[RMDB]
Source information:
Conditions: 150 mM KOAc, 10 mM MgCl2 and 150 mM bicine (pH 8.5), 24 C. An RNA of 177 nucleotides, treated with 2A3 and DMS and read out base by base. For 2A3 the reverse transcriptase was SuperScript II with manganese. The 2A3 profile rests on 1,329 reads. In probing experiments dimethyl sulfate is read out at A N1 and C N3, which are open when not base-paired. For DMS, 1,944 sequencing reads were counted. 2A3 is a SHAPE reagent: it acylates the 2'-hydroxyl of flexible nucleotides of all four kinds.
RNA sequence: GGGAACGACUCGAGUAGAGUCGAAAAGACGCCUGUGUGGCGAAGCGAGCAUGAGAAAGAGCCGCACAGUCCAUCUAAUAUAAAGCGGCGAGAUGGAUUGCUCGCGAAAAGAUCCAUCGCACUGAGAACUCAUACCAGCUUUCGAGCUGGUAUGAGUAAAAGAAACAACAACAACAAC
Reactivity to 2A3 in 0.01 (KOAc 150mM, MgCl2 10mM, bicine 150mM(pH8.5), 24C), signal-to-noise 2, nucleotides 027 to 126: g050a040c020g010c000c000u050g080u000g020u080g020g000c040g000a080a010g000c000g000a010g000c000a060u130g030a010g130a130a110a000g110a020g010c000c000g020c020a030c010a010g000u010c020c000a040u010c020u140a170a110u040a100u070a160a260a030g030c000g040g020c000g000a040g020a080u050g030g000a000u010u030g030c010u010c010g000c000g020a040a000a000a020g050a020u000c000c000a000u060c000g000c000a040c070u070g040a020g010a110
Reactivity to DMS in 0.01 (KOAc 150mM, MgCl2 10mM, bicine 150mM(pH8.5), 24C), signal-to-noise 2, nucleotides 027 to 126: g010a190c080g010c020c000u050g010u030g060u020g010g010c000g020a090a040g000c010g030a000g000c010a040u020g000a300g000a060a130a100g030a300g000c000c000g000c010a060c070a050g010u010c050c110a160u020c070u020a170a120u100a090u040a050a060a040g030c000g050g010c000g070a140g000a010u030g000g030a020u000u000g000c010u000c000g000c000g000a040a030a080a090g000a130u000c010c000a070u040c000g000c050a020c100u030g060a160g050a070